This 177-nucleotide RNA was probed chemically with 2A3 and DMS. The RNA was probed in 150 mM KOAc, 10 mM MgCl2 and 150 mM bicine (pH 8.5) at 24 C. DMS adducts were read by reverse transcription with MarathonRT.
[RMDB]
RNA sequence: GGGAACGACUCGAGUAGAGUCGAAAAGAAAGAAAUCGAGAGACUAGCAAUAUUAGAUCGAAUAACUCGUUCUAUCUAACUGAGGGUGAUGAGUUCCGUAAAAGCGGAUUCUAGUCUAAUCGAGAAAGGGUUAGUAUCAGUUCGCUGAUACUAACCCAAAAGAAACAACAACAACAAC
Reactivity to 2A3 in 0.01 (KOAc 150mM, MgCl2 10mM, bicine 150mM(pH8.5), 24C), signal-to-noise 4, nucleotides 027 to 126: g200a010a120a000g090a010a110a030u020c010g010a020g000a000g000a060c000u010a000g010c100a050a060u010a050u110u080a070g110a260u080c100g070a010a040u070a120a040c100u030c040g040u050u000c010u060a060u000c000u030a050a150c080u100g100a130g050g060g030u070g020a090u100g000a000g040u050u000c000c000g010u030a160a090a050a000g050c000g000g000a010u020u000c000u000a000g010u000c010u060a100a120u000c020g000a000g080a130a020a020
Reactivity to DMS in 0.01 (KOAc 150mM, MgCl2 10mM, bicine 150mM(pH8.5), 24C), signal-to-noise 2, nucleotides 027 to 126: g020a100a110a110g000a050a130a150u010c000g000a030g040a040g000a020c040u000a000g000c150a050a040u000a040u000u000a060g010a110u080c280g010a000a010u020a020a030c040u000c070g000u020u000c030u010a010u000c010u020a080a110c180u030g010a030g020g000g040u010g000a050u040g000a050g000u000u000c000c000g040u000a010a020a140a120g020c000g020g000a020u000u010c030u000a010g000u000c000u000a060a050u000c020g000a020g010a050a010a150